[RMDB]
RNA sequence: GGGAACGACUCGAGUAGAGUCGAAAAGCUAGUCGGUGACGACUAGCAGCCACGACUAAGGUCGUGGGAAGAUGCUCACAAACCUCACAGUGGCAUCAAUAACUACAUCAUGUGGGGAAACCGGAUUAACGGAUAACAUUAAAAUUUAAGAUGUAGGAUUUAGGCAUGAGUUCGCUCAUGCCUAAAUAAAAGAAACAACAACAACAAC
Reactivity to DMS in 0.01 (KOAc 150mM, MgCl2 10mM, bicine 150mM(pH8.5), 24C), signal-to-noise 1, nucleotides 027 to 156: g020c040u000a010g020u000c000g000g000u000g010a190c050g010a040c020u000a040g000c000a090g000c000c040a000c000g000a030c000u000a070a270g080g080u000c010g030u000g000g000g000a120a110g000a040u000g040c000u040c040a070c020a090a030a010c010c020u000c010a040c000a160g050u030g000g000c030a060u020c010a120a110u010a090a130c020u000a020c010a070u000c000a150u000g000u000g000g020g020g020a120a080a210c010c000g000g010a120u010u010a130a130c000g000g010a130u000a160a090c030a050u010u000a010a090a170a100u030u010u010a110a160g010a020u000g040u000a060g030g000
Reactivity to 2A3 in 0.01 (KOAc 150mM, MgCl2 10mM, bicine 150mM(pH8.5), 24C), signal-to-noise 3, nucleotides 027 to 156: g000c000u010a000g000u020c000g000g070u080g040a090c010g000a000c010u000a000g000c000a000g020c000c000a000c000g000a000c000u110a130a110g190g000u000c000g000u010g000g000g000a070a060g030a000u010g020c040u160c280a020c020a040a130a180c010c040u050c000a030c000a020g000u000g020g000c000a000u000c010a020a000u140a020a010c000u010a000c020a000u000c020a030u050g010u080g040g000g000g040a020a030a020c020c000g070g000a190u230u110a170a060c010g020g010a110u100a170a000c050a010u150u240a030a070a080a100u170u190u060a090a020g000a010u010g010u010a000g000g040